[RMDB]
RNA sequence: GGGAACGACUCGAGUAGAGUCGAAAAGGGGUCGAAGAAGAUCCUUGGAUUUAGAUUGCUUUUGACGGACUGAAGCCUCCACGGUCCGAUAAGCAAUCUUGUCAGGAUCUACUUCGACGGAGGCACCCAAAACGGAACGUGUUCGCACGUUCCGUAAACCUGUGGUAAACUUCGGUUUACCACAGGUAAAAGAAACAACAACAACAAC
Reactivity to 2A3 in 0.01 (KOAc 150mM, MgCl2 10mM, bicine 150mM(pH8.5), 24C), signal-to-noise 2, nucleotides 027 to 156: g050g040g000g030u000c010g000a000a000g020a020a010g000a010u010c010c040u010u140g050g020a040u300u200u060a000g000a020u000u000g000c030u170u060u080u120g260a120c020g010g000a010c010u020g040a120a060g050c040c030u020c070c050a060c040g000g000u010c040c030g010a020u020a060a010g000c000a000a000u020c000u000u020g040u030c050a020g000g000a000u000c000u020a070c010u090u010c000g000a000c020g000g030a000g000g020c010a050c080c000c030a100a030a040a000c010g000g000a000a000c010g020u040g020u120u100c170g010c120a000c000g010u020u030c000c000g000u000a040a010

Chemical mapping of a 207-nucleotide RNA with 2A3. The reactions ran in a buffer of 150 mM KOAc, 10 mM MgCl2 and 150 mM bicine (pH 8.5), at 24 C. High 2A3 reactivity points to a flexible backbone, as in loops and unpaired stretches. Reactivities are given for positions 27 through 156. 2A3 adducts were read by reverse transcription with SuperScript II with manganese.